[RMDB]
RNA sequence: GGGAACGACUCGAGUAGAGUCGAAAACAGACCAUGACCACAUCGGAGAUCGCUACCGUGCUGGCCUGGCACGACGCCCUCAAUGCCGCCGACAUUGAGACCCUCGUGGCGUUGUCUACUGACGACACGAAAACUCAAGAUUCGUCUUGAGUUUUCGAAAAGAAACAACAACAACAAC
Reactivity to 2A3 in 0.01 (KOAc 150mM, MgCl2 10mM, bicine 150mM(pH8.5), 24C), signal-to-noise 9, nucleotides 027 to 126: c050a020g090a050c010c020a050u080g070a080c010c000a020c020a090u080c070g040g010a060g020a070u100c050g020c080u070a070c020c020g050u030g020c030u030g040g070c000c020u040g030g000c030a010c050g080a020c030g010c000c020c000u020c020a030a060u060g010c010c020g050c020c020g050a070c020a030u030u080g020a040g020a070c010c000c000u040c030g030u030g010g010c020g010u020u020g060u000c030u070a180c090u110g080a050c060g020a010c020a000
Reactivity to DMS in 0.01 (KOAc 150mM, MgCl2 10mM, bicine 150mM(pH8.5), 24C), signal-to-noise 7, nucleotides 027 to 126: c110a100g010a140c030c030a060u020g000a090c040c030a060c070a070u010c060g010g010a080g020a070u010c110g000c040u020a080c060c050g010u010g010c060u000g000g010c040c020u010g010g000c020a050c050g010a080c070g010c040c040c000u010c010a040a050u000g000c050c030g010c020c010g000a100c050a040u020u020g010a080g010a130c050c010c010u000c040g020u010g010g030c050g000u000u000g000u010c030u010a100c100u010g010a080c070g010a100c120a210